[RMDB]
RNA sequence: GGGAACGACUCGAGUAGAGUCGAAAACUGAAUUCCGGUUGGAAAACAACGAAUUCAAUGUCGUCGAUGUCGGGAGUCUCAAUGGCACCUACGUCAACCGCGAGCCCGUGGAUUCGGCGGUGCUGGCGUCUAAUGCCCAAUUCGUUGGGCAUUAGACAAAAGAAACAACAACAACAAC
Reactivity to DMS in 0.01 (KOAc 150mM, MgCl2 10mM, bicine 150mM(pH8.5), 24C), signal-to-noise 3, nucleotides 027 to 126: c140u000g010a000a030u000u000c050c300g020g040u020u010g010g000a150a050a060a190c030a050a050c040g020a010a020u000u000c020a040a060u020g020u000c130g000u000c050g010a020u010g010u000c060g020g010g020a170g020u000c000u000c210a120a120u020g020g010c020a030c030c020u000a090c040g020u000c060a090a080c060c040g000c010g020a060g020c080c070c020g000u010g000g000a180u010u000c120g010g000c040g010g000u000g050c020u000g000g000c170
Reactivity to 2A3 in 0.01 (KOAc 150mM, MgCl2 10mM, bicine 150mM(pH8.5), 24C), signal-to-noise 2, nucleotides 027 to 126: c020u020g000a010a000u040u000c100c140g180g060u040u020g040g070a080a200a100a160c010a020a010c020g010a000a000u000u020c030a030a080u150g070u120c050g010u030c050g010a020u040g050u050c020g030g050g030a220g040u000c020u020c040a060a150u170g030g000c010a000c010c050u040a030c020g020u020c030a070a080c060c060g020c020g030a040g050c070c080c010g040u060g080g030a300u190u180c040g040g000c000g020g010u070g040c010u020g040g040c050